[RMDB]
RNA sequence: GGGAACGACUCGAGUAGAGUCGAAAAACGGGGAGAUGACUUUAACCAUUCUUAGCAAUUCCAGCUCCCCCCAGCUGCUUCGUAUCCAGCCGUCAGAGCGGGCACAACAGGGUGAUGGGACGUGGGACCUUUACUUGCCCUUCGGGGCAAGUAAAGGAAAAGAAACAACAACAACAAC
Reactivity to DMS in 0.01 (KOAc 150mM, MgCl2 10mM, bicine 150mM(pH8.5), 24C), signal-to-noise 1, nucleotides 027 to 126: a060c300g000g030g030g000a040g000a100u030g000a100c040u040u000u000a100a110c030c080a030u030u010c070u060u040a070g000c190a080a130u000u000c040c000a100g010c120u000c090c010c060c000c050c090a040g000c030u000g000c070u000u000c030g000u040a060u000c060c010a090g010c130c030g040u000c070a010g000a110g000c080g010g050g000c030a030c070a080a000c090a110g000g010g000u060g040a100u000g040g000g030a030c020g000u000g030g000g000a180
Reactivity to 2A3 in 0.01 (KOAc 150mM, MgCl2 10mM, bicine 150mM(pH8.5), 24C), signal-to-noise 2, nucleotides 027 to 126: a070c060g010g000g060g010a060g000a050u090g130a110c040u080u130u150a050a030c000c010a140u210u010c040u030u120a040g070c050a060a190u050u060c000c000a020g000c020u010c000c000c000c040c000c020a020g020c050u110g010c030u090u140c040g000u060a120u010c030c000a010g060c000c010g110u120c050a000g000a000g080c050g010g030g060c060a020c030a130a090c020a050g000g000g100u030g040a110u150g020g010g000a030c020g010u110g000g000g050a040
Structure probing data (DMS and 2A3) for a 177-nucleotide construct. The reactions ran in a buffer of 150 mM KOAc, 10 mM MgCl2 and 150 mM bicine (pH 8.5), at 24 C. 2A3 adducts were read by reverse transcription with SuperScript II with manganese. DMS adducts were read by reverse transcription with MarathonRT. For DMS, 1,299 sequencing reads were counted. The data come from the RNA Mapping Database (RMDB), library OK1LIB.